[RMDB]
RNA sequence: GGGAACGACUCGAGUAGAGUCGAAAAGAUAUGGAAGUCAUUGCUUUUGACGUCUAUCUGUAAUACUUUCAGUCGGAAACGACUGAAAGUAUUACAGUAAGGACGAUAAGCAGGGACUUCCUAAGUCCACGGUGUUAGAGUUCGCUCUAACACCGUGAAAAGAAACAACAACAACAAC
Reactivity to DMS in 0.01 (KOAc 150mM, MgCl2 10mM, bicine 150mM(pH8.5), 24C), signal-to-noise 1, nucleotides 027 to 126: g000a130u000a300u020g000g010a010a000g000u010c010a100u000u000g000c000u000u000u020u010g000a220c100g040u000c000u000a300u000c000u000g000u000a000a010u000a000c000u000u000u000c030a000g010u010c000g000g000a200a090a200c000g010a010c000u010g000a020a000a000g020u000a000u010u000a010c010a010g000u010a100a300g000g000a000c010g020a100u000a030a020g010c000a000g030g010g000a000c000u000u000c000c000u010a030a070g010u000c010

An RNA of 177 nucleotides, treated with DMS and read out base by base. For DMS the reverse transcriptase was MarathonRT. Conditions: 150 mM KOAc, 10 mM MgCl2 and 150 mM bicine (pH 8.5), 24 C.